[RMDB]
RNA sequence: GGGAACGACUCGAGUAGAGUCGAAAAGCGCACCGUAACCGGCCCCUAGACGAGCUCGGCGCGAUGAGCCGCCAGGUCAUCGCGACCCUGCUGUCGCGCUGUGGAAUUCCCGAUUCCGGUGUCGGGCAACGUGUCUUCAGUUCGCUGAAGACACGUUAAAAGAAACAACAACAACAAC
Reactivity to DMS in 0.01 (KOAc 150mM, MgCl2 10mM, bicine 150mM(pH8.5), 24C), signal-to-noise 2, nucleotides 027 to 126: g010c050g030c010a070c040c090g010u000a100a060c020c020g000g000c080c010c000c040u000a110g010a040c030g020a040g000c020u010c300g000g000c030g030c000g010a010u000g000a110g010c000c030g030c220c240a040g000g010u000c000a020u000c020g000c030g010a080c010c010c050u010g000c020u010g000u000c020g000c050g000c040u000g020u010g010g000a150a160u000u000c060c000c010g000a170u000u010c020c000g010g020u010g020u000c050g010g010g010c300
Reactivity to 2A3 in 0.01 (KOAc 150mM, MgCl2 10mM, bicine 150mM(pH8.5), 24C), signal-to-noise 1, nucleotides 027 to 126: g060c020g000c040a050c030c050g110u080a130a060c040c030g000g040c010c070c010c030u040a070g030a040c060g150a010g000c010u010c020g020g000c020g040c000g010a000u030g020a020g040c000c000g040c040c060a100g030g030u010c010a010u030c000g000c000g170a270c020c000c000u010g020c020u020g040u000c000g000c030g000c030u000g130u100g090g040a090a160u120u070c000c010c020g060a040u140u050c010c020g060g050u020g010u050c020g000g000g050c020